[RMDB]
This 177-nucleotide RNA was probed chemically with DMS and 2A3. The data come from the RNA Mapping Database (RMDB), library RFM100. The reactions ran in a buffer of 150 mM KOAc, 10 mM MgCl2 and 150 mM bicine (pH 8.5), at 24 C.
RNA sequence: GGGAACGACUCGAGUAGAGUCGAAAAGCGAUGGCCGUCAAACAUACACUUGAGAAUUCUGUGUGAGGGUACUGUAGCAUCGGGUUACUGUACACCAAUCCAGACGAUUCUCAGGUGGUUUGACGCCAACUGCGCAGCUUUUCGAAGCUGCGCAGUUAAAAGAAACAACAACAACAAC
Reactivity to DMS in 0.01 (KOAc 150mM, MgCl2 10mM, bicine 150mM(pH8.5), 24C), signal-to-noise 3, nucleotides 027 to 126: g010c210g040a130u010g010g000c120c030g060u000c000a000a000a000c000a040u080a300c000a000c000u000u000g000a000g030a000a000u000u000c000u000g030u010g000u000g020a300g000g000g000u000a020c000u040g000u000a000g000c000a300u040c040g010g100g030u010u000a000c000u050g020u030a030c000a240c030c010a050a110u000c000c000a000g000a150c300g050a000u000u000c000u000c010a000g000g040u030g000g010u010u010u000g000a000c000g000c010c000
Reactivity to 2A3 in 0.01 (KOAc 150mM, MgCl2 10mM, bicine 150mM(pH8.5), 24C), signal-to-noise 4, nucleotides 027 to 126: g070c050g090a080u080g030g000c160c050g010u000c020a000a000a000c020a020u300a050c010a010c010u000u000g000a000g000a020a050u190u030c000u000g230u030g030u030g140a030g000g000g010u000a000c000u010g000u010a010g020c020a040u270c150g300g070g000u000u000a000c000u000g000u050a000c210a180c020c000a000a020u000c000c000a000g010a030c060g150a010u010u000c000u000c000a000g010g000u000g000g000u000u000u010g010a010c010g000c000c000